[RMDB]
RNA sequence: GGGAACGACUCGAGUAGAGUCGAAAAACUGCAUCUACGGAUGCAGAACUACGUUCAUCCAAUUUAUUUGGACGCAUGAAAUGAGAAUAGGGAACGGGAUUCUCAUACGCAGGAUACGGCCUGCGAAAAAACUCCUUAUGCUUCGGCAUAAGGAGAAGAUAUAACCCUGGUUCGCCAGGGUUAUAUCAAAAGAAACAACAACAACAAC
Reactivity to 2A3 in 0.01 (KOAc 150mM, MgCl2 10mM, bicine 150mM(pH8.5), 24C), signal-to-noise 3, nucleotides 027 to 156: a010c000u000g000c000a000u000c000u020a040c200g140g000a000u000g000c010a000g000a010a010c030u080a020c000g020u000u020c010a020u010c010c000a020a010u040u190u160a180u090u130u050g010g000a000c010g020c040a050u160g090a160a140a020u000g000a020g010a010a020u030a030g040g030g000a010a010c020g000g000g010a000u000u020c000u000c000a010u020a020c000g000c000a000g010g040a060u040a200c080g120g030c020c000u000g000c000g070a060a000a000a000a000a000c000u000c000c000u000u000a000u000g000c010u020u040c120g080g010c000a000u000a000a000g000g000a000g000a000a010
Reactivity to DMS in 0.01 (KOAc 150mM, MgCl2 10mM, bicine 150mM(pH8.5), 24C), signal-to-noise 2, nucleotides 027 to 156: a050c000u000g020c000a010u000c020u010a130c300g040g000a010u010g010c000a000g000a040a110c030u000a020c000g020u000u010c010a090u000c050c160a050a200u000u010u000a110u030u000u000g010g010a020c000g030c010a050u000g000a050a070a140u000g010a130g010a130a110u000a120g010g010g020a050a050c070g030g010g040a300u000u000c010u000c020a010u000a110c000g060c000a010g000g000a110u010a080c110g000g010c000c000u000g000c000g000a000a040a040a030a020a050c010u020c000c000u000u000a000u000g000c010u000u000c290g020g060c000a010u000a000a000g010g010a010g000a000a000